[RMDB]
The record gives the reactivity of an RNA of 177 nucleotides to DMS and 2A3. The 2A3 profile rests on 1,357 reads. Reactivities are rounded to 0.1 and cut off at 0 and 3. The RNA was probed in 150 mM KOAc, 10 mM MgCl2 and 150 mM bicine (pH 8.5) at 24 C. It was measured as part of the RMDB library OK1LIB.
RNA sequence: GGGAACGACUCGAGUAGAGUCGAAAAGCGAAUAAAAUACUUCUGGUCUGCCCUAAAUCCCGCGCAAUAUCUCUGUUGUGGAAAGGAAACCCGCCCCGCAGGCCAAUGGAGAUCCAGUAGAGACAACGAGAUUUCCGAAAUUCGUUUCGGAAAUCUCAAAAGAAACAACAACAACAAC
Reactivity to DMS in 0.01 (KOAc 150mM, MgCl2 10mM, bicine 150mM(pH8.5), 24C), signal-to-noise 1, nucleotides 027 to 126: g000c110g070a130a010u000a060a150a010a120u010a080c040u050u000c030u000g040g000u000c000u000g080c000c010c060u000a020a080a080u060c000c030c040g020c060g000c040a000a020u000a070u070c000u040c080u000g010u050u020g000u000g000g000a090a070a090g070g030a180a070a090c130c040c020g010c050c010c030c040g000c000a020g030g100c010c030a000a050u060g000g030a000g030a000u000c120c030a010g000u010a070g100a120g010a070c210a080a080c210
Reactivity to 2A3 in 0.01 (KOAc 150mM, MgCl2 10mM, bicine 150mM(pH8.5), 24C), signal-to-noise 3, nucleotides 027 to 126: g030c030g080a090a050u240a110a130a000a000u230a190c020u050u020c000u000g030g000u010c000u010g020c030c020c000u030a050a080a060u030c000c010c000g020c000g000c030a020a120u050a100u130c030u000c030u080g040u070u050g020u040g010g050a080a170a130g010g000a060a050a150c020c020c000g030c000c000c000c000g040c000a010g100g000c030c010a000a010u080g030g000a070g020a030u030c070c090a050g030u130a060g100a000g020a130c090a140a010c110